[RMDB]
The record gives the reactivity of an RNA of 177 nucleotides to DMS and 2A3. 2A3 adducts were read by reverse transcription with SuperScript II with manganese. The data come from the RNA Mapping Database (RMDB), library RFMREP. The RNA was probed in 150 mM KOAc, 10 mM MgCl2 and 150 mM bicine (pH 8.5) at 24 C. The 2A3 profile rests on 1,041 reads. For DMS the reverse transcriptase was MarathonRT.
RNA sequence: GGGAACGACUCGAGUAGAGUCGAAAAUUAAAGAUCGCUUUGACGAGCCAACAAUGGAAGAGCCAACACGUGAUUUAGCUACGCAUAGUUACUAACUUAAGACAGUUCUGCUUUGCUAUGGAUACACGAUUAGAGUCGAGUUCGCUCGACUCUAAUCAAAAGAAACAACAACAACAAC
Reactivity to DMS in 0.01 (KOAc 150mM, MgCl2 10mM, bicine 150mM(pH8.5), 24C), signal-to-noise 2, nucleotides 027 to 126: u000u010a060a070a060g000a170u010c070g010c050u000u020u010g000a060c030g000a060g000c030c030a060a070c150a100a080u000g010g010a040a060g010a080g010c050c040a020a020c120a070c080g010u000g000a130u000u010u000a080g010c050u010a100c130g000c060a010u000a040g000u000u000a040c070u010a040a070c070u000u010a070a060g010a090c250a030g000u000u000c090u000g020c050u000u000u010g010c020u000a060u000g010g000a110u000a050c140a040c160
Reactivity to 2A3 in 0.01 (KOAc 150mM, MgCl2 10mM, bicine 150mM(pH8.5), 24C), signal-to-noise 2, nucleotides 027 to 126: u080u010a000a010a000g060a140u000c010g000c060u200u050u100g030a020c000g010a010g000c030c010a120a030c090a150a060u090g070g000a050a010g010a010g070c000c000a030a020c030a020c080g020u030g060a100u030u090u170a020g060c040u050a000c060g050c040a040u010a090g030u040u030a080c030u050a090a020c010u080u050a060a050g080a080c050a020g030u040u020c020u040g000c060u080u070u030g010c000u030a040u110g030g050a030u100a070c060a020c080